[RMDB]
RNA sequence: GGGAACGACUCGAGUAGAGUCGAAAAACCUAUGGAUUCGUCCAUAGGUGCUGGCGCGCGGCCUUUGUCCUGUCGCGUGUGCGUGGUGCGCGAUAUACGCGCAAUAGUGACAAUUCGUUGUCACUAAUGGACAAGUAAUGUUCGCAUUACUUGUCCAAAAAGAAACAACAACAACAAC
Reactivity to 2A3 in 0.01 (KOAc 150mM, MgCl2 10mM, bicine 150mM(pH8.5), 24C), signal-to-noise 3, nucleotides 027 to 126: a000c000c000u000a000u010g000g000a010u000u100c190g040u030c080c000a000u000a000g000g020u010g110c050u070g070g000c010g010c000g000c010g020g010c020c010u050u090u110g040u020c000c030u030g010u020c010g000c020g020u020g030u030g090c080g090u160g060g110u100g010c000g010c000g010a020u050a030u050a300c000g000c000g000c000a000a010u070a010g000u010g010a000c000a010a000u050u070c220g050u060u000g000u020c000a000c010u010a050a130
Reactivity to DMS in 0.01 (KOAc 150mM, MgCl2 10mM, bicine 150mM(pH8.5), 24C), signal-to-noise 4, nucleotides 027 to 126: a010c000c000u000a000u000g000g010a030u000u020c230g020u000c000c010a000u000a000g000g010u000g000c100u010g010g000c020g010c020g010c010g000g000c010c140u000u000u010g000u000c100c100u010g010u000c000g010c010g020u000g020u000g010c090g020u010g010g010u000g020c010g010c000g020a200u010a090u000a110c010g010c010g010c010a060a050u000a010g000u000g000a020c000a010a060u010u000c180g000u000u000g000u000c000a010c000u000a010a100